[RMDB]
RNA sequence: GGGAACGACUCGAGUAGAGUCGAAAAGGAGCUUGAGCGUCUUACUGAUGAGAUGCGAUCGCGUUUGAGUGAGGUGGAGGAGCUUGGUAGUCAGGCGCUGGAGGCGCUCCAGCAUCGCCUAGAGACGUAAGGGAUGCUAGUUCGCUAGCAUCCCUUAAAAAGAAACAACAACAACAAC
Reactivity to DMS in 0.01 (KOAc 150mM, MgCl2 10mM, bicine 150mM(pH8.5), 24C), signal-to-noise 2, nucleotides 027 to 126: g010g000a150g000c000u010u010g000a230g000c020g010u000c000u000u000a130c130u000g000a120u030g000a080g000a050u010g000c050g010a110u010c100g020c020g000u000u000u010g010a090g010u010g000a090g010g000u010g000g020a070g010g010a060g000c060u000u000g020g020u010a100g000u000c050a020g010g020c060g030c060u010g010g000a040g030g020c120g010c050u000c010c040a040g010c080a110u000c050g000c010c000u000a120g010a110g000a080c120g000
Source: RMDB library OK2TST, as collected in RNAgym. This 177-nucleotide RNA was probed chemically with DMS. The RNA was probed in 150 mM KOAc, 10 mM MgCl2 and 150 mM bicine (pH 8.5) at 24 C. The DMS profile rests on 2,106 reads.